An RNA of 177 nucleotides, treated with 2A3 and DMS and read out base by base. The 2A3 profile rests on 1,440 reads. The reactions ran in a buffer of 150 mM KOAc, 10 mM MgCl2 and 150 mM bicine (pH 8.5), at 24 C.

RNA sequence: GGGAACGACUCGAGUAGAGUCGAAAAAGAAAUUCUUGGUGGACAAGGUUGGUGCGGACAACGAGCUAAUCCUGUCGUCUGAGAAGCAGACACGCGAGCAAGAGACUUACGACGCUGGAGCGACUGACUAGUAGGGGUCUUUCGAGACCCCUACUAGAAAAGAAACAACAACAACAAC
Reactivity to 2A3 in 0.01 (KOAc 150mM, MgCl2 10mM, bicine 150mM(pH8.5), 24C), signal-to-noise 3, nucleotides 027 to 126: a000g150a010a020a000u070u030c030u070u080g050g020u180g120g040a030c010a050a050g000g050u000u000g040g020u080g140c020g000g070a080c050a210a070c150g000a010g000c010u020a000a140u100c020c010u020g000u010c050g060u000c020u020g030a040g040a130a000g060c000a010g060a050c060a010c130g060c060g010a000g060c030a100a050g030a030g030a160c030u060u090a040c090g100a020c050g030c020u040g070g040a030g050c020g050a100c020u060g030a050
Reactivity to DMS in 0.01 (KOAc 150mM, MgCl2 10mM, bicine 150mM(pH8.5), 24C), signal-to-noise 2, nucleotides 027 to 126: a050g000a130a030a060u010u010c000u000u000g030g010u000g000g000a050c010a120a020g000g030u000u000g030g020u010g030c010g000g000a140c100a110a120c100g020a220g010c020u000a100a040u000c020c010u010g000u000c110g030u000c030u000g020a110g010a090a060g000c060a030g010a080c130a100c040g020c030g010a040g020c050a090a110g000a090g020a080c040u000u010a100c060g000a080c090g010c020u000g000g010a140g030c000g010a200c040u000g000a150